RNA sequence: GGGAACGACUCGAGUAGAGUCGAAAAUCGGCACAUGCGAUAUUUCAUACCACAAGAAUGUGGCGCUCCGCGGUUGGUGAGCAUGCUCGGUCCGUCCGAGAAGCCUUAAAACUGCGACGACACAUUCUACCUCUACAAGAUUCGUCUUGUAGAGGUAAAAAGAAACAACAACAACAAC
Reactivity to 2A3 in 0.01 (KOAc 150mM, MgCl2 10mM, bicine 150mM(pH8.5), 24C), signal-to-noise 9, nucleotides 027 to 126: u030c010g040g080c070a090c050a200u240g050c020g030a020u020a200u060u130u060c060a070u080a140c010c010a040c030a080a020g000a000a000u000g000u000g010g000c010g010c070u110c080c020g000c010g010g000u010u010g020g080u100g030a090g010c010a030u210g010c010u000c000g010g020u030c080c190g090u080c010c000g030a000g000a000a000g000c010c000u110u180a030a120a010a000c000u010g010c010g150a160c000g000a000c050a000c000a000u000u000c000
Reactivity to DMS in 0.01 (KOAc 150mM, MgCl2 10mM, bicine 150mM(pH8.5), 24C), signal-to-noise 9, nucleotides 027 to 126: u010c020g010g010c090a140c210a090u020g010c020g010a030u010a070u010u010u020c090a110u010a250c050c030a120c200a110a060g000a020a010u000g010u000g000g000c000g000c100u000c060c010g010c000g010g010u000u000g000g010u010g000a090g010c010a020u010g020c000u000c000g000g000u010c240c250g000u020c000c000g010a020g000a020a020g010c010c000u000u000a090a080a020a010c000u000g000c000g000a120c010g000a010c010a000c010a010u000u000c010